An RNA of 207 nucleotides, treated with 2A3 and DMS and read out base by base.
Source: RMDB library OK3TST, as collected in RNAgym.
For DMS, 7,720 sequencing reads were counted.
DMS adducts were read by reverse transcription with MarathonRT.
RNA sequence: GGGAACGACUCGAGUAGAGUCGAAAACAUUAUUUCCAAGGCCAGAAAAAUACGAAUACGUAUCGGGUGUUAGAUUAUUUAUGUGUUUCGUGGGUAGUCAUGCUUUUUGACGCGGCGCCAGAGACUUAGUAAGCCGUGGCUUGCUGCACCACGGCCACAUUUUCAAAGAAUUCGUUCUUUGAAAAUGAAAAGAAACAACAACAACAAC
Reactivity to 2A3 in 0.01 (KOAc 150mM, MgCl2 10mM, bicine 150mM(pH8.5), 24C), signal-to-noise 3, nucleotides 027 to 156: c030a020u150u140a090u050u130u020c020c020a030a100g060g000c020c030a040g110a080a100a030a020a010u100a030c050g070a160a050u130a140c080g040u080a040u050c030g020g020g010u050g060u090u060a040g010a100u040u060a030u120u290u040a080u100g050u000g040u020u080u050c110g010u030g000g020g020u030a060g010u020c010a040u050g040c020u090u100u120u150u190g030a040c050g000c000g030g010c000g000c020c010a030g020a000g010a120c010u050u050a050g060u080a220a000g030c010c020g010u000g000g010c000u030u090g010c010u020g000c030a050c060c000a000c000g010g000c000c000a010
Reactivity to DMS in 0.01 (KOAc 150mM, MgCl2 10mM, bicine 150mM(pH8.5), 24C), signal-to-noise 3, nucleotides 027 to 156: c040a120u010u000a100u000u000u000c000c010a080a140g020g030c040c040a150g020a010a100a070a100a090u000a060c030g010a150a110u000a080c060g010u000a050u000c050g020g010g040u000g020u010u000a080g010a100u000u000a070u010u000u000a050u020g020u000g010u000u000u000c040g020u000g010g010g020u000a080g000u000c020a070u000g010c040u000u010u000u000u010g010a050c010g020c070g040g000c030g010c040c030a120g030a190g010a050c060u000u000a090g010u000a110a070g050c000c000g050u010g000g020c030u000u000g040c030u010g010c020a060c000c000a010c000g010g010c020c020a080